[RMDB]
This 177-nucleotide RNA was probed chemically with DMS and 2A3. Values cover nucleotides 27 to 126.

RNA sequence: GGGAACGACUCGAGUAGAGUCGAAAAUGUCGGAGCCAAUAGAGCGGGAGAGCAGGAGCGCGCUCUUUCUUGAUUUGUUGGUAGAAGAAGGUUUCCUGGGCUAUGGGUUAUUGACCGCUCGAUGUCACCGACCAUUACUCUUCGGAGUAAUGGUCGGAAAAGAAACAACAACAACAAC
Reactivity to DMS in 0.01 (KOAc 150mM, MgCl2 10mM, bicine 150mM(pH8.5), 24C), signal-to-noise 1, nucleotides 027 to 126: u080g000u050c080g000g010a180g060c010c000a050a030u030a030g000a050g000c050g070g030g000a050g000a080g060c010a130g000g000a140g000c070g000c130g000c000u000c020u010u000u000c040u000u050g040a170u000u010u000g000u000u000g000g000u000a030g070a160a060g000a030a000g000g000u000u010u070c000c000u000g000g000g040c070u000a110u030g000g050g020u000u020a070u000u000g010a140c110c030g050c040u020c030g000a160u030g000u000c050a130
Reactivity to 2A3 in 0.01 (KOAc 150mM, MgCl2 10mM, bicine 150mM(pH8.5), 24C), signal-to-noise 2, nucleotides 027 to 126: u180g020u090c010g040g020a000g020c000c000a040a020u070a010g080a010g060c030g010g080g000a040g020a000g000c030a070g050g190a110g030c070g000c000g050c020u020c070u000u040u060c080u050u130g190a220u020u000u020g050u000u000g040g000u150a040g030a040a030g000a020a020g000g000u000u010u000c000c000u030g020g000g000c010u040a030u280g020g010g020u080u040a130u080u210g120a030c000c000g000c000u010c000g030a020u150g070u050c040a010